RNA sequence: GGGAACGACUCGAGUAGAGUCGAAAAGAAAGAAAGAAGUGGAGCUUCAGCAUGGGUGUUUGACCUUACAACUCGGCAUUGAUCAAUCGUGGUUGUAGAGUCAUGCACCUCUGCCGACUCUCCGGAAACAGUGUACAUUUUUCGAAAUGUACACUGUAAAAGAAACAACAACAACAAC
Reactivity to 2A3 in 0.01 (KOAc 150mM, MgCl2 10mM, bicine 150mM(pH8.5), 24C), signal-to-noise 9, nucleotides 027 to 126: g060a010a030a010g110a040a080a010g100a090a020g100u190g060g000a000g000c030u020u010c010a000g000c000a010u020g000g000g000u000g000u000u000u020g000a000c000c000u010u020a000c000a000a000c000u010c010g030g020c090a140u080u300g100a140u280c090a080a030u060c040g080u150g040g000u000u000g000u000a000g000a010g020u000c000a000u010g000c000a000c000c000u000c000u000g000c000c000g000a000c010u000c000u000c010c000g020g060a090a170
Reactivity to DMS in 0.01 (KOAc 150mM, MgCl2 10mM, bicine 150mM(pH8.5), 24C), signal-to-noise 9, nucleotides 027 to 126: g010a090a080a080g010a100a080a080g010a140a120g010u020g010g010a020g000c120u000u000c020a050g010c000a010u000g000g010g010u000g000u000u000u000g000a010c010c010u000u000a010c020a010a010c010u000c020g000g000c300a110u020u020g010a140u030c280a100a080u010c010g010u030g000g000u000u000g000u000a010g000a060g000u000c000a010u000g000c000a000c010c000u000c090u000g000c010c040g000a030c080u000c010u000c020c010g000g010a080a100

About this RNA:
An RNA of 177 nucleotides, treated with 2A3 and DMS and read out base by base. The RNA was probed in 150 mM KOAc, 10 mM MgCl2 and 150 mM bicine (pH 8.5) at 24 C. 2A3 adducts were read by reverse transcription with SuperScript II with manganese. The data come from the RNA Mapping Database (RMDB), libraries RFM100 and RFMREP.